[RMDB]
This 207-nucleotide RNA was probed chemically with 2A3 and DMS.
RNA sequence: GGGAACGACUCGAGUAGAGUCGAAAAAGUGAGUAUGGCUCGUUACGACGAGCCAUACUCACAACGGUUUUCCUAAAUCGUCGUGAGACGGACCUUGGAAUACCUAGUAUUUAAAUAACUAGGUCAAAUUAGCCUAGAUCCUUCGGGAUCUAGGCAAUCUUGUACCAGAGUUCGCUCUGGUACAAGAAAAAGAAACAACAACAACAAC
Reactivity to 2A3 in 0.01 (KOAc 150mM, MgCl2 10mM, bicine 150mM(pH8.5), 24C), signal-to-noise 1, nucleotides 027 to 156: a000g000u010g000a040g010u020a000u000g000g020c050u000c050g000u010u080a090c270g060a020c030g000a150g000c040c000a000u010a000c000u000c000a010c000a010a000c000g020g000u030u000u060u020c000c000u010a020a020a020u040c010g010u010c000g020u050g160a110g000a030c020g030g010a020c000c000u030u050g020g010a070a000u030a030c000c000u030a050g040u030a090u040u130u150a180a230a120u230a030a000c000u000a000g000g000u010c010a020a100a180u280u200a030g000c000c000u000a000g000a010u000c000c010u010u100c200g070g000g000a000u030c000u000a000g000g000c000a000a000
Reactivity to DMS in 0.01 (KOAc 150mM, MgCl2 10mM, bicine 150mM(pH8.5), 24C), signal-to-noise 1, nucleotides 027 to 156: a180g010u010g000a020g030u000a020u010g000g020c020u000c000g030u000u010a190c260g020a150c000g040a020g040c000c020a000u000a000c000u020c000a020c000a020a040c060g030g000u000u000u000u000c000c010u000a050a050a120u010c020g010u000c010g030u010g020a300g000a090c000g000g020a040c040c040u000u010g020g000a130a180u010a070c010c010u000a050g020u010a070u010u010u000a070a100a150u010a070a060c020u000a000g000g010u000c090a020a060a090u020u000a220g020c000c000u000a000g000a000u000c000c000u010u010c300g040g020g010a010u000c000u000a000g010g020c000a000a000

2A3 adducts were read by reverse transcription with SuperScript II with manganese. It was measured as part of the RMDB library M2RFPK. The reactions ran in a buffer of 150 mM KOAc, 10 mM MgCl2 and 150 mM bicine (pH 8.5), at 24 C. For 2A3, 567 sequencing reads were counted.